[RMDB]
Overview: An RNA of 177 nucleotides, treated with DMS and read out base by base. For DMS, 3,089 sequencing reads were counted. The RNA was probed in 150 mM KOAc, 10 mM MgCl2 and 150 mM bicine (pH 8.5) at 24 C. For DMS the reverse transcriptase was MarathonRT.

RNA sequence: GGGAACGACUCGAGUAGAGUCGAAAAUUCCCCUAUUUCGAUAGGGGAACACCUGCGGGCGGCUCGCAGUUCCGACUUCCUCCUCCUCAGAGUCAAAGGGCGAUAGGCCUCGGUUCGCCGAGGCCAAUAGAACAGAUACUUUCGAGUAUCUGUUCUAAAAAGAAACAACAACAACAAC
Reactivity to DMS in 0.01 (KOAc 150mM, MgCl2 10mM, bicine 150mM(pH8.5), 24C), signal-to-noise 3, nucleotides 027 to 126: u000u000c010c000c000c010u000a010u000u000u020c150g020a000u000a000g010g010g010g010a010a020c100a090c090c000u000g020c040g010g000g020c050g000g020c020u000c040g000c030a050g020u000u000c020c020g010a120c070u000u000c020c010u010c030c000u010c010c010u010c040a080g000a130g010u000c060a050a080a100g000g000g010c070g010a120u010a090g020g010c010c000u000c000g020g010u010u020c190g020c020c010g010a010g020g000c010c000a000a020